Source information
Chemical mapping of a 177-nucleotide RNA with 2A3 and DMS. For DMS the reverse transcriptase was MarathonRT. 2A3 adducts were read by reverse transcription with SuperScript II with manganese. It was measured as part of the RMDB library OK2TST. The DMS profile rests on 28,310 reads.

RNA sequence: GGGAACGACUCGAGUAGAGUCGAAAACUACUGCACCCCUCACCCCAGAGCUCUGAGGACAGCUCCCGCAUUUCCAUUACCUUCUUUCGCCUCUUCCGAGUUAUGCGGCUGGUCAAGCUUCUCAGUAAACCAUAAAUGAUUUCGAUCAUUUAUGGUUAAAAGAAACAACAACAACAAC
Reactivity to 2A3 in 0.01 (KOAc 150mM, MgCl2 10mM, bicine 150mM(pH8.5), 24C), signal-to-noise 4, nucleotides 027 to 126: c000u070a050c050u090g040c030a070c000c000c010c010u020c020a030c000c000c000c000a010g010a010g030c020u010c030u080g040a030g020g020a040c020a030g010c010u010c000c020c000g030c030a050u060u060u010c030c010a030u040u080a090c010c010u060u050c010u040u070u040c040g020c010c000u020c000u030u010c030c010g040a050g040u020u020a040u150g070c030g040g000c030u050g000g040u070c010a010a050g000c010u050u030c010u000c010a050g020u100a070
Reactivity to DMS in 0.01 (KOAc 150mM, MgCl2 10mM, bicine 150mM(pH8.5), 24C), signal-to-noise 9, nucleotides 027 to 126: c070u000a070c090u010g010c060a150c040c020c010c020u000c050a150c050c020c020c030a100g010a130g010c050u000c040u000g010a100g000g000a090c110a070g000c040u000c050c020c030g010c070a080u000u000u000c030c030a090u000u000a090c060c040u010u000c060u000u000u000c060g010c050c010u000c020u000u000c020c010g010a070g010u000u000a090u010g020c070g010g010c040u000g000g000u000c080a060a090g010c060u000u000c020u000c020a150g010u010a090